An RNA of 177 nucleotides, treated with DMS and 2A3 and read out base by base. 2A3 adducts were read by reverse transcription with SuperScript II with manganese. Reactivities are given for positions 27 through 126. The 2A3 profile rests on 3,021 reads. For DMS, 4,366 sequencing reads were counted.
RNA sequence: GGGAACGACUCGAGUAGAGUCGAAAAGCACAUAUGCACGGUUCCACCGCAUAAGAGAGGCAGGCAAGCCAGCAGUUGAACCCACGGUGCUUACAUCGGAACAGUUGAAAGCGCUCUCACUGAAGAACAUUUAAUGCGGAUUCGUCCGCAUUAAAUGAAAAGAAACAACAACAACAAC
Reactivity to DMS in 0.01 (KOAc 150mM, MgCl2 10mM, bicine 150mM(pH8.5), 24C), signal-to-noise 5, nucleotides 027 to 126: g020c040a050c080a130u000a080u000g030c050a070c110g010g020u000u010c040c070a080c080c060g030c050a090u010a090a090g010a110g000a070g020g010c020a050g020g020c130a100a100g020c030c030a090g010c030a060g020u000u000g000a050a090c030c020c050a080c130g000g000u000g020c020u000u000a060c090a070u000c060g000g000a060a070c080a030g010u010u010g000a050a070a060g010c030g020c020u000c060u010c040a060c100u000g000a070a090g000a080a170
Reactivity to 2A3 in 0.01 (KOAc 150mM, MgCl2 10mM, bicine 150mM(pH8.5), 24C), signal-to-noise 3, nucleotides 027 to 126: g010c030a010c000a100u280a040u160g030c030a030c070g060g000u050u050c020c030a020c030c000g010c030a060u170a300a020g090a020g030a030g040g010c040a050g130g040c030a080a000g040c010c020a000g010c000a020g020u040u030g040a040a020c040c000c020a040c060g040g000u030g010c000u030u080a040c020a090u070c030g050g070a140a050c010a070g030u060u090g100a130a110a010g040c030g010c000u030c010u040c020a040c040u080g050a100a020g040a150a010